[RMDB]
RNA sequence: GGGAACGACUCGAGUAGAGUCGAAAAGAUAUGGAUACCUGGGAGCCUAUCGAUCGGAAACGAUCGUAAGGGCGAGGAUCAGGAUCCUAAGUCAAAAGACCAUUAACACUUCGGUGUUAAUGGUCAAGUCCCAAUAACACUUCGGUGUUAUUGGGACAAAAGAAACAACAACAACAAC
Reactivity to 2A3 in 0.01 (KOAc 150mM, MgCl2 10mM, bicine 150mM(pH8.5), 24C), signal-to-noise 1, nucleotides 027 to 126: g000a000u010a000u050g020g000a020u260a300c000c000u000g000g000g000a000g000c000c000u030a030u050c000g010a010u030c030g000g020a000a010a010c000g020a000u010c000g000u060a300a300g010g000g000c020g000a060g000g020a000u000c000a000g000g000a000u030c000c000u000a040a010g000u000c010a050a000a000a300g000a000c000c000a010u000u020a010a010c000a000c030u080u150c300g140g000u000g000u000u000a000a010u000g040g020u000c000a010a000
Reactivity to DMS in 0.01 (KOAc 150mM, MgCl2 10mM, bicine 150mM(pH8.5), 24C), signal-to-noise 1, nucleotides 027 to 126: g000a000u000a070u030g000g010a020u000a110c000c010u010g000g000g000a020g020c000c000u020a150u000c000g000a000u000c010g020g020a020a010a040c010g000a000u000c000g010u000a020a150g000g010g000c000g020a090g020g010a080u000c000a000g000g000a100u000c010c000u000a020a110g010u010c000a110a130a070a100g000a030c000c000a010u000u000a000a000c010a000c000u010u000c200g030g000u000g000u010u010a000a000u000g010g010u000c000a020a050